[RMDB]
The data come from the RNA Mapping Database (RMDB), library M2PK50.
This 177-nucleotide RNA was probed chemically with 2A3 and DMS.
For DMS, 944 sequencing reads were counted.
Conditions: 150 mM KOAc, 10 mM MgCl2 and 150 mM bicine (pH 8.5), 24 C.
RNA sequence: GGGAACGACUCGAGUAGAGUCGAAAAACCUCUAAGUUCGCUUAGAGGUAAUGAACGCUGCAAAAAGCAGCGCGCUCAGCGGAGCACGCAAAAGCAAGGCAAGAACACCAUUCUUCGGAAUGGUGAAAUCAAUUGGACGUUUCGACGUCCAAUUGAUAAAAGAAACAACAACAACAAC
Reactivity to 2A3 in 0.01 (KOAc 150mM, MgCl2 10mM, bicine 150mM(pH8.5), 24C), signal-to-noise 1, nucleotides 027 to 126: a000c000c000u010c000u010a000a040g000u020u130c200g050c110u000u000a000g000a020g020g010u010a000a030u060g000a130a030c040g000c000u030g000c010a180a060a030a100a180g000c010a000g000c030g030c040g000c000u000c020a050g070c050g250g000a020g030c100a010c060g090c070a120a160a020a000g000c030a030a000g100g000c010a060a000g000a120a010c000a010c000c000a000u020u020c020u020u070c210g010g040a000a000u000g020g000u000g000a010a000
Reactivity to DMS in 0.01 (KOAc 150mM, MgCl2 10mM, bicine 150mM(pH8.5), 24C), signal-to-noise 2, nucleotides 027 to 126: a030c000c000u000c000u000a000a020g000u000u010c220g010c010u000u000a020g000a020g010g010u000a010a030u010g020a120a100c070g000c000u010g000c060a060a040a060a130a060g010c000a030g000c000g010c070g000c010u000c010a250g020c090g000g020a200g040c060a060c090g010c050a060a040a060a090g020c070a020a150g010g010c130a060a080g000a130a180c010a010c000c000a010u000u000c010u000u070c080g020g010a000a020u000g000g030u000g010a010a050